[RMDB]
RNA sequence: GGGAACGACUCGAGUAGAGUCGAAAAGAUAUGGAACAUGGGAGCGUCCGGUCGGAAACGACCGAAGACGCGAGGAUCAUGUUUCCUAAGUCAAACGAGUAAAAGUUGUUCGCAACUUUUACUCGAACGUUACAUAACGCUUCGGCGUUAUGUAACGAAAAGAAACAACAACAACAAC
Reactivity to DMS in 0.01 (KOAc 150mM, MgCl2 10mM, bicine 150mM(pH8.5), 24C), signal-to-noise 3, nucleotides 027 to 126: g010a040u000a300u000g000g010a040a030c000a000u000g010g010g000a040g010c000g000u010c000c000g000g000u000c000g020g010a060a060a110c010g020a010c010c000g010a050a060g010a000c000g010c000g020a040g010g010a050u010c010a010u000g010u000u000u010c000c020u000a020a060g010u010c020a090a100a230c010g000a020g010u000a000a020a020a010g000u000u000g010u000u010c260g000c000a000a010c000u000u000u010u000a000c000u000c010g000a020a080
Reactivity to 2A3 in 0.01 (KOAc 150mM, MgCl2 10mM, bicine 150mM(pH8.5), 24C), signal-to-noise 2, nucleotides 027 to 126: g010a010u050a010u120g000g000a000a020c000a020u000g000g010g000a030g020c020g000u000c010c020g000g000u000c020g020g000a090a030a040c000g000a010c010c010g030a100a060g000a010c010g030c000g000a030g010g000a000u010c010a010u000g010u010u150u030c000c000u040a110a020g030u010c040a060a060a080c030g010a010g000u000a000a000a000a000g000u020u020g020u040u170c300g010c180a000a000c000u000u020u000u000a010c000u010c000g010a010a000
Background: Structure probing data (DMS and 2A3) for a 177-nucleotide construct. For DMS, 3,657 sequencing reads were counted.